[RMDB]
RNA sequence: GGGAACGACUCGAGUAGAGUCGAAAAUGGACAUGCUAUCUAGACUAGGUGAGCUCAGUACUCUGGUACGCGUGAGCACGAUCAUGAUCUCAUGCUAGGAUCGACAUGCGGAUCAUCGCAGACGUCCCGUGUGCCCAUAAUUCGUUAUGGGCACACGAAAAGAAACAACAACAACAAC
Reactivity to 2A3 in 0.01 (KOAc 150mM, MgCl2 10mM, bicine 150mM(pH8.5), 24C), signal-to-noise 2, nucleotides 027 to 126: u080g030g000a010c030a020u050g000c010u050a000u070c010u030a030g060a100c030u040a050g110g040u040g090a010g020c000u000c040a020g000u030a030c030u050c100u300g070g000u080a030c080g040c040g110u060g030a020g020c010a010c010g040a050u100c010a070u060g030a040u000c010u000c030a010u070g030c020u040a040g000g020a070u040c020g050a040c030a060u100g050c050g030g000a050u110c030a030u100c050g020c030a010g050a080c000g030u020c000c000
Reactivity to DMS in 0.01 (KOAc 150mM, MgCl2 10mM, bicine 150mM(pH8.5), 24C), signal-to-noise 3, nucleotides 027 to 126: u010g000g000a060c070a110u000g000c020u000a050u010c030u000a110g010a110c120u010a080g010g010u000g000a090g020c030u000c070a110g020u000a040c050u010c150u000g020g010u000a030c120g000c170g010u020g000a100g010c060a040c040g000a100u000c130a120u000g000a040u000c040u000c040a020u000g010c030u000a050g000g010a160u000c020g010a050c050a040u010g000c070g020g000a110u010c080a070u000c070g030c130a080g010a090c100g010u010c020c020